[RMDB]
RNA sequence: GGGAACGACUCGAGUAGAGUCGAAAAUUGAGGUACUGGGCCAGCUUCUGGUUCAUCAGGUUGCCGACCUCCAUGCCGGUCAGAAUCCGCUUCAUCUCGCCGCCGUAGCCCUCGGUGUGGCUGCUGAAGUGUAAUUGGCAUUCGUGCCAAUUACACUAAAAGAAACAACAACAACAAC
Reactivity to DMS in 0.01 (KOAc 150mM, MgCl2 10mM, bicine 150mM(pH8.5), 24C), signal-to-noise 2, nucleotides 027 to 126: u010u010g000a100g000g010u010a090c100u000g030g010g010c020c020a040g000c190u000u020c040u000g020g010u000u000c070a070u000c130a080g000g020u000u000g020c030c030g010a090c050c010u000c030c120a070u000g010c030c010g010g010u030c050a070g010a110a130u000c050c040g020c060u000u010c050a060u020c040u000c080g030c030c020g010c030c050g030u010a080g000c010c020c030u000c070g010g020u020g010u010g010g000c060u010g010c070u000g010a100
Reactivity to 2A3 in 0.01 (KOAc 150mM, MgCl2 10mM, bicine 150mM(pH8.5), 24C), signal-to-noise 1, nucleotides 027 to 126: u050u100g050a060g040g050u070a100c090u070g000g020g030c040c000a030g070c090u170u000c040u100g090g000u040u080c020a050u080c000a010g070g000u110u080g070c000c000g030a030c000c000u020c030c000a030u080g050c030c010g010g060u090c020a000g060a060a080u020c030c000g060c080u140u040c020a070u020c010u040c030g000c010c000g000c030c010g020u030a020g030c000c010c020u010c040g020g030u030g030u070g040g020c040u070g000c050u050g020a110